[RMDB]
The record gives the reactivity of an RNA of 177 nucleotides to DMS and 2A3.
The DMS profile rests on 1,569 reads.
DMS adducts were read by reverse transcription with MarathonRT.
It was measured as part of the RMDB library OK2TST.
The reactions ran in a buffer of 150 mM KOAc, 10 mM MgCl2 and 150 mM bicine (pH 8.5), at 24 C.

RNA sequence: GGGAACGACUCGAGUAGAGUCGAAAACUUAUAGUGCUGCUUUAAGCUGUGGCAGGUGAGGAAGUAAACAGUGAAGCCGCAACCAGCACAAAAAGGCUACACCAUGCAAUUGAUUCAAAUGUACGUACAGAUAGUGGUGUUUCGACACCACUAUCUGAAAAGAAACAACAACAACAAC
Reactivity to DMS in 0.01 (KOAc 150mM, MgCl2 10mM, bicine 150mM(pH8.5), 24C), signal-to-noise 3, nucleotides 027 to 126: c040u000u000a120u020a110g020u010g040c020u000g010c110u000u030u010a070a080g020c000u030g020u020g010g000c000a090g020g010u000g030a140g010g020a070a120g020u000a120a160a080c070a100g000u000g000a170a110g040c050c020g020c030a030a060c170c060a020g020c020a030c030a020a050a040a060a060g000g000c020u000a050c090a110c000c010a090u010g000c070a050a040u030u020g020a150u000u010c050a020a090a090u010g000u010a060c130g020u000a160
Reactivity to 2A3 in 0.01 (KOAc 150mM, MgCl2 10mM, bicine 150mM(pH8.5), 24C), signal-to-noise 2, nucleotides 027 to 126: c000u070u080a050u130a180g030u060g010c020u000g000c020u040u080u150a060a020g050c010u000g010u050g090g000c060a040g110g000u100g060a050g070g050a100a060g100u160a000a150a050c020a070g060u020g060a050a010g010c030c010g000c020a000a030c010c020a040g000c030a010c050a000a170a000a000a000g040g000c010u030a020c010a040c060c000a010u090g000c000a030a090u030u100g080a090u070u100c040a060a080a110u130g070u070a030c040g040u070a050